[RMDB]
RNA sequence: GGGAACGACUCGAGUAGAGUCGAAAACUUGCUACCAUGAUAAAGGACAAGGCAAUAUCCCAAACAAGGGCAGAAUUAAUCCAAUCUGUUACGGAACGCAACUCGGUUUUUGACCCGAAACGUAGAACCCGGAACAUGCAUUCGUGCAUGUUCCGGGAAAAGAAACAACAACAACAAC
Reactivity to 2A3 in 0.01 (KOAc 150mM, MgCl2 10mM, bicine 150mM(pH8.5), 24C), signal-to-noise 1, nucleotides 027 to 126: c000u060u050g000c000u170a170c040c040a120u300g030a120u300a300a280a080g000g000a050c090a050a000g000g010c000a010a010u060a080u130c000c000c000a000a050a000c150a140a020g000g000g000c130a060g000a030a060u110u140a040a000u070c030c040a000a140u000c000u000g050u030u020a190c100g050g030a050a000c000g000c060a000a050c120u000c040g000g000u050u000u000u190u230g030a060c000c090c000g000a000a000a000c060g000u000a040g000a120a070